[RMDB]
Chemical mapping of a 207-nucleotide RNA with DMS and 2A3. Reactivities are given for positions 27 through 156. For DMS, 9,635 sequencing reads were counted. DMS adducts were read by reverse transcription with MarathonRT.
RNA sequence: GGGAACGACUCGAGUAGAGUCGAAAACAUGGUUGACAAACUGGCUGCCAAGGCCGGUCUUGCGGGAGCGAUCGAAUCAGCCGGCACAACUCAUCAAAUGAUCACGGAUUUGAGCUGUAUUGCGUGCGACACACCGGUCGUUCAGCGGGAUCGAGAAUCAUUUUAGUAUCUUCGGAUACUAAAAUGAAAAAGAAACAACAACAACAAC
Reactivity to DMS in 0.01 (KOAc 150mM, MgCl2 10mM, bicine 150mM(pH8.5), 24C), signal-to-noise 4, nucleotides 027 to 156: c040a120u010g000g020u000u010g010a120c060a060a060a120c030u000g020g020c030u000g010c030c080a140a220g020g020c030c020g020g010u000c010u000u000g010c010g000g020g000a050g020c010g010a030u000c010g010a080a100u000c120a150g040c010c000g010g080c050a030c010a020a030c040u000c010a110u000c040a050a100a080u000g010a120u000c130a210c200g020g020a140u000u000u000g020a040g030c080u000g000u010a080u000u000g020c040g020u000g030c000g010a040c030a090c060a150c110c010g010g030u000c020g020u000u000c020a100g010c010g000g000g010a030u000c010g010a090g010a120a270
Reactivity to 2A3 in 0.01 (KOAc 150mM, MgCl2 10mM, bicine 150mM(pH8.5), 24C), signal-to-noise 4, nucleotides 027 to 156: c040a070u120g060g010u040u080g070a040c040a040a110a050c070u060g060g000c010u030g070c090c070a150a110g040g000c020c000g000g010u000c000u020u040g000c020g080g250g010a000g000c000g000a010u000c000g030a030a040u100c020a040g000c000c000g090g000c030a010c010a010a030c010u030c020a060u010c020a090a110a130u180g110a100u140c070a060c180g120g040a090u060u050u080g010a020g000c020u010g030u100a100u070u160g080c030g030u160g030c010g100a050c030a000c010a020c150c020g010g000u000c000g000u000u000c000a010g000c000g010g010g000a000u010c020g020a020g060a120a090